[RMDB]
RNA sequence: GGGAACGACUCGAGUAGAGUCGAAAAUAAGAGCAUGUACGAAUCACGAUAUGAGAGUUCCUGGUGAAUCGCGGGUACAAGGAAAGGUAUUAAUCUCCCACUGCGUUCCCUUGCAGUAGGGAUAUAAUAGUGUAGACUUGUUCGCAAGUCUACACUAAAAAGAAACAACAACAACAAC
Reactivity to 2A3 in 0.01 (KOAc 150mM, MgCl2 10mM, bicine 150mM(pH8.5), 24C), signal-to-noise 2, nucleotides 027 to 126: u260a050a000g040a020g000c020a070u040g010u100a090c050g110a140a050u060c050a000c080g040a030u030a080u300g120a120g010a010g010u020u020c000c020u090g020g040u040g010a030a020u020c020g000c020g000g040g010u060a020c010a000a000g070g050a110a040a020g100g020u060a110u040u150a120a090u010c010u040c030c000c000a020c000u010g000c020g010u030u050c000c000c020u000u070g030c000a000g020u110a150g000g000g000a000u010a010u000a020a050
Reactivity to DMS in 0.01 (KOAc 150mM, MgCl2 10mM, bicine 150mM(pH8.5), 24C), signal-to-noise 3, nucleotides 027 to 126: u010a050a100g000a100g020c090a060u010g000u000a090c030g010a080a060u010c040a070c050g010a100u010a120u010g010a050g020a220g010u000u000c010c020u000g010g030u010g010a060a050u000c060g000c050g000g000g000u010a030c090a050a020g000g000a030a060a050g000g010u000a070u000u000a050a080u000c120u000c000c000c000a030c010u000g010c000g020u010u000c020c020c020u020u000g000c030a020g010u000a080g000g000g000a030u000a020u010a060a130

Chemical mapping of a 177-nucleotide RNA with 2A3 and DMS.
Reactivities are given for positions 27 through 126.
Source: RMDB library M2PK90, as collected in RNAgym.
For 2A3 the reverse transcriptase was SuperScript II with manganese.
As a SHAPE reagent, 2A3 marks flexible, mostly unpaired nucleotides at the ribose 2'-OH.